About this RNA:
Structure probing data (DMS and 2A3) for a 207-nucleotide construct. The RNA was probed in 150 mM KOAc, 10 mM MgCl2 and 150 mM bicine (pH 8.5) at 24 C. For DMS the reverse transcriptase was MarathonRT. 2A3 adducts were read by reverse transcription with SuperScript II with manganese. Values cover nucleotides 27 to 156.

[RMDB]
RNA sequence: GGGAACGACUCGAGUAGAGUCGAAAAUCUUGGAGACAUGUAUAUUUAGGUGUCCUGGUCAACAAGAUCAAUUGUAGGAAUGGUUGGUGCAAUCACAUUGGUCAUUAAAUACAGACAUCACACAUAAUCAAGCAGAUUUAGCUCAGGGUAUGGGUAACACUAGGUGAGCAUUCGUGCUCACCUAGUGAAAAGAAACAACAACAACAAC
Reactivity to DMS in 0.01 (KOAc 150mM, MgCl2 10mM, bicine 150mM(pH8.5), 24C), signal-to-noise 1, nucleotides 027 to 156: u000c030u000u000g000g000a270g010a030c020a010u030g000u000a060u000a080u000u020u010a100g030g010u000g010u010c030c030u010g070g060u000c090a030a240c040a060a110g000a000u000c000a060a200u000u020g030u000a120g020g010a030a090u000g010g020u000u000g050g050u000g000c050a090a130u010c090a100c050a120u000u000g000g020u010c010a040u030u010a080a030a130u010a200c060a230g000a060c020a060u020c090a040c090a080c040a060u000a030a000u000c030a080a060g050c000a130g020a200u000u000u020a080g100c000u000c050a060g000g010g000u000a000u000g010g000g030u000a030a110
Reactivity to 2A3 in 0.01 (KOAc 150mM, MgCl2 10mM, bicine 150mM(pH8.5), 24C), signal-to-noise 3, nucleotides 027 to 156: u010c000u000u050g070g020a080g010a050c040a070u050g140u090a100u030a100u190u190u120a090g080g010u020g020u060c010c070u100g040g000u020c060a040a050c040a080a070g020a000u000c030a000a100u050u210g040u040a040g000g090a090a060u040g070g050u040u060g020g020u070g040c010a030a040u050c000a020c040a070u030u050g030g010u050c040a080u140u120a040a090a030u190a040c050a020g020a010c020a050u050c020a030c010a020c010a080u120a100a060u080c060a040a010g070c030a010g050a130u050u100u170a020g010c020u010c050a010g030g000g000u050a030u100g060g000g040u140a070a010